[RMDB]
RNA sequence: GGGAACGACUCGAGUAGAGUCGAAAACCCUUAGCAUUCGUGCUAAGGGAAAUAACGGUCGGCUCAUGCAGCUAGUCGAUAAUGCUGCUCGACCUUUUGGUAAAAUCUGGCCGUUCGCGGCCAGAAACUGACAACCCAUAUUCGUAUGGGUUGUCAGAAAAGAAACAACAACAACAAC
Reactivity to DMS in 0.01 (KOAc 150mM, MgCl2 10mM, bicine 150mM(pH8.5), 24C), signal-to-noise 1, nucleotides 027 to 126: c000c000c010u000u000a020g000c000a040u000u000c170g010u030g000c000u000a010a000g010g000g040a000a000a000u010a030a070c150g020g030u000c000g010g010c170u000c210a140u000g010c000a000g000c000u000a140g000u000c200g000a070u000a030a030u000g010c000u000g020c030u000c010g000a030c000c000u010u000u000u000g010g020u000a080a070a090a120u010c000u000g000g000c000c000g020u010u030c220g000c000g030g000c000c020a020g000a000a030a120
Reactivity to 2A3 in 0.01 (KOAc 150mM, MgCl2 10mM, bicine 150mM(pH8.5), 24C), signal-to-noise 1, nucleotides 027 to 126: c020c010c040u000u000a030g010c030a040u030u050c140g080u080g000c000u000a010a000g000g020g050a000a120a050u150a050a040c060g000g000u000c010g070g000c040u040c300a000u250g030c010a010g000c000u030a040g200u230c070g050a080u080a110a020u210g020c000u000g000c010u020c000g010a010c020c000u000u190u000u040g060g000u150a000a050a020a090u000c010u000g020g010c080c000g000u030u060c170g000c060g110g040c000c000a000g000a000a030a000